RNA sequence: GGGAACGACUCGAGUAGAGUCGAAAAUUAAUUUUCUGACUGCUGUCAGGACAUGUUAUGUUGAGCAGACAGACCCUUGAUAGCAAACUUAAUGCAAAUGGUUUCCUCCUAGUCCGAUUGCCACAUACAUGCCACUAUCCUUCGGGAUAGUGGCAUGAAAAGAAACAACAACAACAAC
Reactivity to DMS in 0.01 (KOAc 150mM, MgCl2 10mM, bicine 150mM(pH8.5), 24C), signal-to-noise 1, nucleotides 027 to 126: u000u020a100a090u000u000u000u020c040u010g000a120c080u010g010c090u000g000u000c040a040g000g000a060c100a060u040g010u000u000a030u010g000u010u010g030a090g030c130a040g010a070c060a040g000a160c160c080c010u010u010g010a050u000a060g010c030a060a080a140c090u000u010a090a080u000g010c090a070a100a100u000g010g020u000u000u010c020c030u000c030c060u010a060g010u010c010c050g010a120u000u010g010c030c070a040c150a120u030a120